[RMDB]
RNA sequence: GGGAACGACUCGAGUAGAGUCGAAAAUCUGAAGCAGAUCUACGCCUUUGAAUAUGAGGGUCUGCUCAAACGCAGCGCGCUAGCCUCCUCCGCUAACCACUGUUUAACACUGGUGAAAAGCACUCAGACGGUUCAGGGCCCCCACAGCGCCGCCUGCGUCUGGGAAUAAUUUCGAUUAUUCCCAGACAAAAGAAACAACAACAACAAC
Reactivity to 2A3 in 0.01 (KOAc 150mM, MgCl2 10mM, bicine 150mM(pH8.5), 24C), signal-to-noise 2, nucleotides 027 to 156: u060c020u060g070a070a040g020c000a000g010a050u000c040u140a090c050g080c040c030u160u230u190g110a170a070u210a170u300g050a160g030g000g010u010c000u000g050c000u020c010a010a020a000c080g000c040a000g000c000g010c010g010c080u040a060g030c040c000u040c030c000u040c030c010g020c020u020a000a020c040c000a000c040u070g060u140u140u040a140a020c030a000c070u040g050g060u060g080a100a070a020a060g050c010a060c010u130c030a030g030a280c070g080g000u030u080c040a030g030g030g050c070c020c020c000c000a030c000a010g010c020g000c060c110g030c000c020u020g000c010
Reactivity to DMS in 0.01 (KOAc 150mM, MgCl2 10mM, bicine 150mM(pH8.5), 24C), signal-to-noise 1, nucleotides 027 to 156: u000c030u000g010a080a110g070c030a040g030a010u010c020u000a180c160g000c090c040u080u000u030g010a120a190u010a070u010g020a210g020g030g010u010c000u000g020c020u010c020a060a080a100c140g000c000a050g010c020g010c040g030c010u000a150g010c010c020u000c020c040u000c030c030g060c030u000a090a060c000c000a100c010u030g000u000u010u000a100a110c060a040c020u000g070g030u010g000a070a110a060a100g000c030a050c040u000c030a040g010a100c000g020g010u000u020c090a110g010g030g010c010c030c010c040c000a080c090a120g030c020g020c000c040g050c070c030u010g000c160
Annotation:
This 207-nucleotide RNA was probed chemically with 2A3 and DMS. For 2A3 the reverse transcriptase was SuperScript II with manganese. Source: RMDB library OK3TST, as collected in RNAgym. For DMS the reverse transcriptase was MarathonRT. For DMS, 1,945 sequencing reads were counted. Reactivities are rounded to 0.1 and cut off at 0 and 3. Conditions: 150 mM KOAc, 10 mM MgCl2 and 150 mM bicine (pH 8.5), 24 C.